[RMDB]
RNA sequence: GGGAACGACUCGAGUAGAGUCGAAAAAGCACUGGUACGACACGUCGUACCAGUGCAGUCGUUGGGAUGGAACGCAAUUAAAUACAUGUGUGACGUGUAUUUGCGAACGACGUAAUUAUUUUUCAAAAUCACGCUAUCGUGUUCGCACGAUAGCGAAGUAAUUACCGAAGUUCGCUUCGGUAAUUACAAAAGAAACAACAACAACAAC
Reactivity to DMS in 0.01 (KOAc 150mM, MgCl2 10mM, bicine 150mM(pH8.5), 24C), signal-to-noise 2, nucleotides 027 to 156: a120g000c000a010c020u000g020g000u000a010c000g040a070c010a170c300g060u000c010g040u020a020c000c010a000g010u000g000c000a000g030u000c010g020u000u000g000g000g020a120u000g020g010a080a170c010g010c020a100a150u020u000a030a060a040u010a010c020a020u000g010u010g040u000g030a100c060g020u000g010u010a010u010u000u010g020c090g000a050a100c010g000a140c010g000u000a060a080u010u000a180u000u000u000u000u030c060a070a070a070a150u010c150a200c000g000c000u000a010u010c000g030u010g020u000u000c290g000c010a000c000g000a020u000a020g010c000g000a020a020
Reactivity to 2A3 in 0.01 (KOAc 150mM, MgCl2 10mM, bicine 150mM(pH8.5), 24C), signal-to-noise 6, nucleotides 027 to 156: a000g000c010a000c000u000g000g010u020a010c010g020a020c050a030c290g220u040c000g000u000a010c000c000a000g000u000g000c000a000g010u000c010g000u010u030g090g050g060a150u110g080g100a110a040c020g000c010a030a040u170u110a090a090a040u040a000c020a000u030g120u020g120u170g280a060c030g010u020g000u010a010u000u030u050g010c010g020a010a000c000g040a010c010g040u070a090a060u200u120a130u050u180u020u030u070c090a090a040a040a090u160c080a040c050g000c000u000a000u010c010g000u010g070u080u070c230g000c060a000c000g000a000u000a000g000c000g000a000a000